The record gives the reactivity of an RNA of 177 nucleotides to DMS and 2A3.
2A3 adducts were read by reverse transcription with SuperScript II with manganese.
The data come from the RNA Mapping Database (RMDB), library M2PK50.
Reactivities are given for positions 27 through 126.
The RNA was probed in 150 mM KOAc, 10 mM MgCl2 and 150 mM bicine (pH 8.5) at 24 C.

RNA sequence: GGGAACGACUCGAGUAGAGUCGAAAACUGCUCUCGUUCGCGAGAGCAGAAAUAAUAAACGCUAGAAAACCAUCAAAACUAGCGAAAUACAUAACGAUCGAAAAAGAAGUCACUUCGGUGACUUCAACAGCUAGUAUAUCUUCGGAUAUACUAGCUGAAAAGAAACAACAACAACAAC
Reactivity to DMS in 0.01 (KOAc 150mM, MgCl2 10mM, bicine 150mM(pH8.5), 24C), signal-to-noise 2, nucleotides 027 to 126: c000u000g000c000u000c000u000c000g020u000u000c190g050c000g000a000g000a030g040c010a000g000a030a030a060u010a120a120u010a170a050a170c020g020c010u000a000g000a100a010a130a170c050c120a030u010c070a100a080a100a070c020u000a010g000c000g000a050a080a090u000a090c080a030u020a040a090c110g010a050u010c140g000a000a050a090a120a010g010a000a000g010u000c000a000c000u010u020c150g010g010u000g000a000c000u000u000c000a050a110
Reactivity to 2A3 in 0.01 (KOAc 150mM, MgCl2 10mM, bicine 150mM(pH8.5), 24C), signal-to-noise 2, nucleotides 027 to 126: c000u000g000c000u000c010u010c020g060u080u050c210g010c010g080a000g020a000g000c000a000g000a000a000a000u010a000a010u080a050a140a000c010g000c000u000a020g030a120a150a030a090c080c010a100u100c030a100a040a050a080c010u000a000g000c000g060a060a070a010u170a020c090a050u170a190a100c060g100a130u220c100g030a030a000a030a040a070g010a000a010g000u000c000a010c030u060u090c120g120g000u010g000a000c000u020u000c000a000a010